[RMDB]
RNA sequence: GGGAACGACUCGAGUAGAGUCGAAAACAAUUGUUCGCAGCUGUUGCACGUUCGGCGAGUGUUCAGCUCUCAGGUUGGUGCAGUACGGUCUCGAGGUGUCCAGCGAUGUGGCCGGCGUUGCCGGUGGGCGAAUACGCAAAUUCGUUUGCGUAUUCGCAAAAGAAACAACAACAACAAC
Reactivity to DMS in 0.01 (KOAc 150mM, MgCl2 10mM, bicine 150mM(pH8.5), 24C), signal-to-noise 2, nucleotides 027 to 126: c050a110a110u010u000g010u000u000c030g020c110a170g000c020u000g000u000u010g030c070a040c060g030u000u000c050g010g000c150g000a140g000u000g010u010u010c120a090g010c010u000c020u020c110a110g000g010u000u000g020g020u010g010c030a090g000u010a040c100g030g050u000c020u000c060g000a060g010g010u000g010u000c180c010a080g000c060g000a090u000g020u000g020g010c000c010g000g010c010g000u000u020g000c010c020g000g020u010g020g020
Reactivity to 2A3 in 0.01 (KOAc 150mM, MgCl2 10mM, bicine 150mM(pH8.5), 24C), signal-to-noise 1, nucleotides 027 to 126: c010a050a170u130u150g090u140u070c050g010c080a020g000c080u030g030u100u080g020c030a020c160g090u100u050c020g070g030c030g020a080g030u060g060u090u060c030a030g000c000u030c000u040c050a070g020g090u050u100g070g010u030g000c020a010g030u050a020c050g010g040u010c000u000c060g030a030g000g010u050g010u000c020c010a000g010c040g080a090u080g020u090g170g010c000c000g000g000c080g190u080u170g000c020c000g000g030u040g040g110